An RNA of 177 nucleotides, treated with 2A3 and DMS and read out base by base.
It was measured as part of the RMDB library TTRDEL.
Conditions: 150 mM KOAc, 10 mM MgCl2 and 150 mM bicine (pH 8.5), 24 C.
For DMS the reverse transcriptase was MarathonRT.
For 2A3, 3,251 sequencing reads were counted.
RNA sequence: GGGAACGACUCGAGUAGAGUCGAAAAGAUAUGGACCCACCGCCCAUAUGGGAGCUCUCUCGGAAACGAGGAGCGAGGAUCAUAUGUAACAAGUGGGUCCUAAGUCAAAGAUGGCUUCGGCCAUCAACCUUAGUGUACGCUUCGGCGUACACUAAGGAAAAGAAACAACAACAACAAC
Reactivity to 2A3 in 0.01 (KOAc 150mM, MgCl2 10mM, bicine 150mM(pH8.5), 24C), signal-to-noise 2, nucleotides 027 to 126: g030a000u080a060u090g000g000a000c000c010c000a000c010c030g060c020c010c000a040u030a010u030g010g010g000a000g000c000u010c010u010c000u000c040g040g050a080a070a060c010g010a020g000g020a020g000c000g010a180g000g030a000u050c020a010u000a020u020g130u170a140a090c120a240a000g000u010g010g010g000u010c000c000u000a000a000g010u010c010a000a020a190g010a000u000g000g000c040u090u130c300g150g000c000c000a010u000c000a000a000
Reactivity to DMS in 0.01 (KOAc 150mM, MgCl2 10mM, bicine 150mM(pH8.5), 24C), signal-to-noise 2, nucleotides 027 to 126: g030a030u000a300u000g000g010a000c000c000c000a000c000c080g010c300c160c000a000u000a000u000g010g010g000a080g020c000u000c000u000c010u000c010g000g000a110a090a170c010g010a020g020g000a010g010c020g010a060g010g000a010u010c000a010u000a000u030g020u020a070a070c200a120a080g000u030g000g000g000u000c000c000u000a010a010g000u000c020a100a110a080g000a030u000g000g000c000u000u010c240g000g030c020c000a000u000c010a090a130